[RMDB]
An RNA of 207 nucleotides, treated with DMS and 2A3 and read out base by base.
For 2A3 the reverse transcriptase was SuperScript II with manganese.
Reactivities are given for positions 27 through 156.
The reactions ran in a buffer of 150 mM KOAc, 10 mM MgCl2 and 150 mM bicine (pH 8.5), at 24 C.
It was measured as part of the RMDB library M2RFPK.
For 2A3, 2,233 sequencing reads were counted.
RNA sequence: GGGAACGACUCGAGUAGAGUCGAAAACGUUGUCAUCGACAACACCCUAUGCAUUCAUGCUCUGUAAGGAUGCGCCGAAAGGUGAGCAAGCCCGAGUUGCUCAGACCUGAAAUGCAACACUUUAGAGAAAACCCGAAGCAGUUCGCUGCUUCGGGAACUCCUUAUAUAUGUUCGCAUAUAUAAGGAGAAAAGAAACAACAACAACAAC
Reactivity to DMS in 0.01 (KOAc 150mM, MgCl2 10mM, bicine 150mM(pH8.5), 24C), signal-to-noise 2, nucleotides 027 to 156: c100g000u000u020g020u000c040a210u000c110g010a060c020a090a060c010a100c010c000c020u010a070u000g010c020a030u000u000c080a140u010g010c030u010c040u010g030u000a270a140g020g030a060u000g000c030g030c050c020g020a110a080a080g020g010u010g010a100g040c020a100a140g000c030c050c080g000a190g010u000u000g010c000u000c030a080g000a060c020c010u010g010a060a040a100u010g000c040a100a060c050a140c080u000u000u000a160g010a200g010a090a050a080a110c020c000c010g010a010a000g030c010a030g010u000u010c270g030c040u020g000c010u000u000c000g000g010g000a000a020
Reactivity to 2A3 in 0.01 (KOAc 150mM, MgCl2 10mM, bicine 150mM(pH8.5), 24C), signal-to-noise 4, nucleotides 027 to 156: c100g000u000u000g010u010c100a200u180c300g020a000c000a000a000c000a040c000c000c000u050a100u050g040c030a030u030u060c040a050u170g010c040u020c000u020g070u030a020a000g030g010a020u010g010c010g000c010c010g080a090a040a010g000g020u020g030a020g010c010a030a010g040c040c030c020g150a100g110u050u040g010c010u010c040a060g060a200c000c040u040g020a020a080a060u070g020c010a060a040c020a020c150u100u130u210a070g020a010g020a050a070a030a050c010c000c000g000a000a000g000c010a010g020u070u170c170g070c130u000g000c000u000u000c000g000g010g010a000a000